[RMDB]
The data come from the RNA Mapping Database (RMDB), library OK1LIB. This 177-nucleotide RNA was probed chemically with 2A3 and DMS. DMS adducts were read by reverse transcription with MarathonRT. Conditions: 150 mM KOAc, 10 mM MgCl2 and 150 mM bicine (pH 8.5), 24 C. 2A3 adducts were read by reverse transcription with SuperScript II with manganese.

RNA sequence: GGGAACGACUCGAGUAGAGUCGAAAAGAAAGCUCCUCACCCGUGUGGAGGAGAAUGGCUAUAACCACCGAAACCUGAGGAAACAGGAAGCCACAACGCAAGCCAUGUGGUUGGCACACGGAAGAAAGCAUUAUGGACUGUUCGCAGUCCAUAAUGCAAAAGAAACAACAACAACAAC
Reactivity to 2A3 in 0.01 (KOAc 150mM, MgCl2 10mM, bicine 150mM(pH8.5), 24C), signal-to-noise 2, nucleotides 027 to 126: g110a010a070a010g080c000u000c010c010u020c000a040c010c050c000g000u000g010u030g020g000a050g010g000a040g060a000a030u090g040g000c040u050a030u080a290a040c020c040a010c050c000g100a130a050a040c000c000u030g040a070g020g270a100a060a010c000a030g000g000a020a010g000c000c000a020c000a110a010c050g040c150a110a000g040c000c040a050u050g000u000g010g000u010u060g130g000c000a000c000a000c000g040g020a050a010g080a020a120a000
Reactivity to DMS in 0.01 (KOAc 150mM, MgCl2 10mM, bicine 150mM(pH8.5), 24C), signal-to-noise 2, nucleotides 027 to 126: g080a060a140a120g040c000u010c000c000u000c010a120c140c000c000g060u000g130u020g000g010a000g010g010a000g010a100a090u030g000g020c080u020a060u000a060a100c090c100a150c060c000g050a090a080a110c020c000u020g000a120g000g000a110a130a120c030a050g000g000a060a040g030c060c000a020c150a080a120c260g000c130a040a120g030c100c190a140u020g020u000g000g030u000u000g000g040c040a000c040a000c000g000g030a100a020g000a130a130a040